[RMDB]
RNA sequence: GGGAACGACUCGAGUAGAGUCGAAAAUCAGAAUCAGGCCGGAGUGUUUAGCGCUCCGUAAACACGGUCGUACAUCCAGCCGGUAGCCUGGUUCCGUGCAUUGAGUGAUGUACGGAGUUUAUAGAGCAAAAGAAAGACCUGUUCGCAGGUCUUUCAAGUGAUCAAGAUCGUUCGCGAUCUUGAUCACAAAAGAAACAACAACAACAAC
Reactivity to 2A3 in 0.01 (KOAc 150mM, MgCl2 10mM, bicine 150mM(pH8.5), 24C), signal-to-noise 1, nucleotides 027 to 156: u160c030a000g110a010a020u030c000a000g000g040c040c000g070g010a030g000u100g020u090u100u300a140g090c000g020c000u000c010c000g000u040a000a000a000c140a000c070g130g120u100c040g030u080a040c030a050u040c050c070a000g010c000c000g000g020u000a000g020c000c000u010g000g000u000u020c020c000g010u060g010c000a060u110u190g060a070g190u230g000a020u000g000u020a000c020g000g000a010g020u120u090u000a120u050a060g070a010g000c080a030a050a160a000g010a010a000a000g000a000c000c000u010g000u030u090c100g010c140a000g000g020u000c000u000u000u000c000a000a000

Source: RMDB library M2RFOK, as collected in RNAgym. An RNA of 207 nucleotides, treated with 2A3 and read out base by base. 2A3 adducts were read by reverse transcription with SuperScript II with manganese. The reactions ran in a buffer of 150 mM KOAc, 10 mM MgCl2 and 150 mM bicine (pH 8.5), at 24 C. For 2A3, 509 sequencing reads were counted.